Chemical mapping of a 177-nucleotide RNA with DMS and 2A3. Conditions: 150 mM KOAc, 10 mM MgCl2 and 150 mM bicine (pH 8.5), 24 C. It was measured as part of the RMDB library OK1LIB.

RNA sequence: GGGAACGACUCGAGUAGAGUCGAAAAGUGGUCGAGUGCGAAGCACUGGGGUAGAGAAAUAAAAAGAGAGAGAGCUACCCCGUCAGUCAGUCACUCUCUGUCUGAAUCUCUCUCUCAAAGACCACGACGUCAUGAGGGAGUUCGCUCCCUCAUGACGAAAAGAAACAACAACAACAAC
Reactivity to DMS in 0.01 (KOAc 150mM, MgCl2 10mM, bicine 150mM(pH8.5), 24C), signal-to-noise 1, nucleotides 027 to 126: g060u010g020g000u000c000g000a050g040u010g000c060g040a280a160g080c000a010c040u050g000g040g010g000u020a030g000a180g030a080a090a000u000a100a020a050a160a110g000a030g000a020g000a000g010a020g000c200u000a060c020c000c030c030g000u010c050a050g000u000c020a040g000u010c180a170c170u010c210u000c000u000g000u010c000u000g000a020a010u000c000u000c000u000c040u000c000u000c020a090a100a130g000a000c000c000a000c000g000a160
Reactivity to 2A3 in 0.01 (KOAc 150mM, MgCl2 10mM, bicine 150mM(pH8.5), 24C), signal-to-noise 2, nucleotides 027 to 126: g030u030g000g000u000c030g050a040g030u030g040c180g130a170a090g050c000a000c010u000g000g000g030g000u010a020g010a000g110a060a200a120u300a110a070a000a010a000g000a000g000a000g000a000g010a000g000c010u010a000c010c020c000c000g010u000c000a000g030u000c000a000g000u010c030a110c220u090c040u040c020u070g000u000c000u010g030a060a070u070c020u000c000u000c000u010c010u000c020a050a110a000g000a000c000c000a000c020g000a010
The 2A3 profile rests on 1,167 reads.